[RMDB]
RNA sequence: GGGAACGACUCGAGUAGAGUCGAAAAGCCUGAUUCGUCAGGCCUAUUUUCCUAAGUCACGUAGAGGACGAUGGGAGCAGGGUAUCGGAAACGAUAUUUGCAUCGAUCAUCGUCUCCCCACCUACGUGAUAUGGACGCACAAGCGCUUCGGCGCUAAUUAGUCCUGUGGAUUCGUCCACAGGACUAAAAAAGAAACAACAACAACAAC
Reactivity to DMS in 0.01 (KOAc 150mM, MgCl2 10mM, bicine 150mM(pH8.5), 24C), signal-to-noise 1, nucleotides 027 to 156: g020c010c000u000g000a090u000u010c290g010u000c010a020g000g060c000c030u000a030u000u000u000u000c010c000u010a060a280g060u000c000a030c020g000u000a030g000a300g010g020a020c020g010a010u000g000g030g010a130g050c020a190g000g010g000u000a020u000c010g020g040a150a130a290c030g010a050u000a010u000u000u000g020c030a120u030c050g000a130u010c010a010u000c030g010u000c000u000c300c060c060c010a300c200c010u000a000c010g020u020g020a040u000a140u010g020g000a080c100g000c080a150c080a110a070g030c020g000c000u000u020c170g060g020c010g000c000u000a060a010
Reactivity to 2A3 in 0.01 (KOAc 150mM, MgCl2 10mM, bicine 150mM(pH8.5), 24C), signal-to-noise 3, nucleotides 027 to 156: g020c010c010u000g000a010u050u100c210g040u020c090a010g000g050c000c000u080a150u030u150u060u050c010c000u030a150a020g000u000c000a000c010g010u000a000g000a010g010g040a020c020g000a020u060g020g020g020a010g000c030a040g140g130g030u010a000u000c010g040g050a110a020a040c010g000a010u000a020u040u090u080g030c060a230u140c050g090a050u070c010a000u010c010g030u000c000u000c010c000c010c000a020c000c000u000a000c000g010u010g000a000u010a000u030g030g000a050c060g040c140a100c060a180a020g030c000g020c020u060u120c270g110g030c000g000c000u030a010a150
Chemical mapping of a 207-nucleotide RNA with DMS and 2A3.
2A3 adducts were read by reverse transcription with SuperScript II with manganese.
Conditions: 150 mM KOAc, 10 mM MgCl2 and 150 mM bicine (pH 8.5), 24 C.
High 2A3 reactivity points to a flexible backbone, as in loops and unpaired stretches.
It was measured as part of the RMDB library RNAMAK.
The 2A3 profile rests on 2,549 reads.